Structure probing data (2A3 and DMS) for a 177-nucleotide construct.
The reactions ran in a buffer of 150 mM KOAc, 10 mM MgCl2 and 150 mM bicine (pH 8.5), at 24 C.
DMS adducts were read by reverse transcription with MarathonRT.
[RMDB]
RNA sequence: GGGAACGACUCGAGUAGAGUCGAAAAGAAUAAAUAGGGAGGUCAGGGUCAGCAGACCGCCGCUGAACCCAGGAUAACCCUCAAGGUCGGCGGUCAAAGCGACGAAAGACAGAGACACGUCGCAAAGAGUCCACCGUAUAUUCGUAUACGGUGGACUAAAAGAAACAACAACAACAAC
Reactivity to 2A3 in 0.01 (KOAc 150mM, MgCl2 10mM, bicine 150mM(pH8.5), 24C), signal-to-noise 3, nucleotides 027 to 126: g080a050a120u300a110a120a030u170a090g080g020g020a170g200g020u020c060a010g020g000g000u000c000a000g000c000a000g010a000c000c020g000c000c000g000c000u030g000a090a050c000c000c020a030g000g120a040u080a210a210c010c000c010u040c100a060a040g120g080u090c010g000g020c000g000g000u000c000a000a080a000g000c000g000a000c010g090a060a070a060g130a070c110a090g130a020g010a080c010a000c030g000u020c020g000c000a010a010a010g070
Reactivity to DMS in 0.01 (KOAc 150mM, MgCl2 10mM, bicine 150mM(pH8.5), 24C), signal-to-noise 2, nucleotides 027 to 126: g020a090a110u020a120a010a140u070a030g000g040g000a120g020g040u020c070a060g000g000g030u000c060a000g000c020a110g000a000c000c000g030c000c010g030c050u040g000a140a030c000c000c050a060g020g000a040u030a150a090c080c000c000u010c230a190a140g000g000u040c030g050g020c000g000g000u000c030a130a040a080g000c000g020a010c000g000a030a090a060g000a080c200a050g000a110g000a020c110a190c030g000u000c020g000c000a060a050a110g000